[RMDB]
RNA sequence: GGGAACGACUCGAGUAGAGUCGAAAACUGGGUGGGCUAUGAUCCUAUGUGUAGGGCCGGCCAAGUCCUUGUUCCACUCCUUCUUGCAGUGGAUCUUGCCGCUUCUCUGAAGAUGAUUGAAAUGCCCACAGCACUUGCAGAGCAAGCAGAAAAGACACGUACCUCAUGAGUUCGCUCAUGAGGUACGAAAAGAAACAACAACAACAAC
Reactivity to 2A3 in 0.01 (KOAc 150mM, MgCl2 10mM, bicine 150mM(pH8.5), 24C), signal-to-noise 1, nucleotides 027 to 156: c020u050g100g000g000u000g000g000g030c030u050a150u110g000a000u000c000c020u070a030u090g080u060g060u160a110g040g020g060c110c040g030g000c080c070a000a000g060u090c060c070u090u300g110u090u040c000c000a000c000u030c000c100u300u220c070u180u200g090c120a000g000u000g010g010a050u000c000u000u210g030c000c030g040c030u210u010c100u060c020u000g100a020a060g040a060u200g000a010u000u030g030a020a020a020u080g040c000c000c000a000c000a000g000c000a030c000u010u030g030c050a000g020a020g250c060a030a000g000c060a020g090a030a240a000a000g080a040c050a000